RNA sequence: GGGAACGACUCGAGUAGAGUCGAAAACAUCUAUUGUCGGCAAGUAAUUGGAUGCGGACCACGUGCCCGUAGCGUUCAAUGCUACGACGGUUGAGACCUCAAUAGGGAUUUUGGGUCGGCGAACUGACUCGUACUGAACUUUCGAGUUCAGUGCGAGAAAAGAAACAACAACAACAAC
Reactivity to DMS in 0.01 (KOAc 150mM, MgCl2 10mM, bicine 150mM(pH8.5), 24C), signal-to-noise 7, nucleotides 027 to 126: c070a100u030c070u010a050u020u020g010u010c020g000g010c120a070a040g000u010a040a060u000u020g020g000a050u000g010c020g010g000a070c030c050a090c140g020u020g000c030c030c040g010u000a040g020c020g000u010u030c170a050a060u030g000c000u010a010c010g010a060c070g000g000u000u000g000a110g000a060c020c010u020c100a070a060u020a070g010g020g010a110u010u010u010u010g010g000g000u000c010g000g020c070g000a080a110c050u000g000a270
Reactivity to 2A3 in 0.01 (KOAc 150mM, MgCl2 10mM, bicine 150mM(pH8.5), 24C), signal-to-noise 9, nucleotides 027 to 126: c030a060u070c030u110a110u060u140g030u030c010g020g040c090a090a020g030u120a150a120u060u060g030g000a020u060g020c020g010g010a020c010c010a090c110g080u170g010c000c000c000g020u030a020g020c010g030u060u080c070a060a040u120g000c000u010a020c000g020a020c010g010g020u030u070g030a030g020a040c000c020u090c020a050a080u090a120g110g010g040a050u040u040u080u110g050g000g000u020c010g010g020c040g010a040a030c020u020g030a020
This 177-nucleotide RNA was probed chemically with DMS and 2A3.
Conditions: 150 mM KOAc, 10 mM MgCl2 and 150 mM bicine (pH 8.5), 24 C.
The 2A3 profile rests on 16,564 reads.